Overview: Chemical mapping of a 177-nucleotide RNA with DMS and 2A3. The data come from the RNA Mapping Database (RMDB), library TTRDES.
[RMDB]
RNA sequence: GGGAACGACUCGAGUAGAGUCGAAAAGAUAUGGACGUCCCUCACUCAACAGCCUGUCGAUCGGAAACGAUCGCAGGACAUGAGUACGCGAGGGACGUCCUAAGUCAAAGGGUACUUCGGUACCCAAGAUGAUGUAUCGGUUCGCCGAUACAUCAUCAAAAGAAACAACAACAACAAC
Reactivity to DMS in 0.01 (KOAc 150mM, MgCl2 10mM, bicine 150mM(pH8.5), 24C), signal-to-noise 4, nucleotides 027 to 126: g000a030u000a300u000g020g010a030c000g020u000c000c000c000u000c010a140c020u000c040a040a150c300a230g000c010c000u000g020u010c030g020a000u010c000g000g000a090a100a190c000g000a000u000c020g020c010a010g010g010a020c090a170u010g000a060g040u000a100c300g030c260g000a010g010g010g020a010c000g010u000c010c000u000a000a050g000u000c030a130a150a210g000g010g010u000a010c000u000u020c180g040g010u000a010c000c000c010a000a030
Reactivity to 2A3 in 0.01 (KOAc 150mM, MgCl2 10mM, bicine 150mM(pH8.5), 24C), signal-to-noise 4, nucleotides 027 to 126: g010a020u080a030u140g010g010a000c000g020u000c000c010c000u010c010a020c020u040c000a000a200c060a230g090c000c010u270g180u300c120g010a000u000c000g010g010a070a070a040c010g000a000u000c010g010c000a000g000g030a000c000a080u020g000a010g060u170a100c300g040c160g110a000g000g000g020a000c000g000u000c000c000u000a010a000g000u000c020a000a030a130g010g000g000u000a000c000u030u120c300g110g000u010a000c000c030c000a000a000